The record gives the reactivity of an RNA of 177 nucleotides to DMS and 2A3.
RNA sequence: GGGAACGACUCGAGUAGAGUCGAAAAGGUGAUCGUAUGUGGCCGGAUUUUGAGGAAGGCUGGAAGGUCUCCAGAGUACUCGAUGCUAUUGCUACUUCAGCAGAAGAACUGUGCUGGGUUAAUGUAGACUUUGAUCAGAUUUCGAUCUGAUCAAAGUAAAAGAAACAACAACAACAAC
Reactivity to DMS in 0.01 (KOAc 150mM, MgCl2 10mM, bicine 150mM(pH8.5), 24C), signal-to-noise 8, nucleotides 027 to 126: g010g020u000g010a050u010c050g010u010a070u010g010u000g010g020c040c060g000g000a190u010u000u000u010g020a110g010g010a210a120g000g010c020u000g010g010a080a120g000g010u010c050u000c020c020a060g000a100g010u000a110c050u000c030g010a070u000g010c050u000a070u000u000g010c100u000a050c060u000u010c030a030g010c030a050g010a100a140g000a080a160c140u000g010u000g010c010u010g000g010g000u010u000a050a120u010g010u000a090g010
Reactivity to 2A3 in 0.01 (KOAc 150mM, MgCl2 10mM, bicine 150mM(pH8.5), 24C), signal-to-noise 4, nucleotides 027 to 126: g030g020u040g020a080u050c020g010u150a070u180g150u130g020g010c020c050g000g030a050u080u120u090u290g090a090g000g060a080a020g050g000c000u010g000g060a080a040g030g040u010c010u000c020c000a020g000a010g080u030a050c010u010c050g050a070u050g030c010u020a030u090u110g030c020u020a050c000u090u150c020a010g000c020a010g050a180a020g040a150a060c070u110g020u020g100c020u010g010g040g000u030u070a070a030u120g070u050a030g010
For 2A3 the reverse transcriptase was SuperScript II with manganese. For 2A3, 5,455 sequencing reads were counted. For DMS, 11,754 sequencing reads were counted. Values cover nucleotides 27 to 126.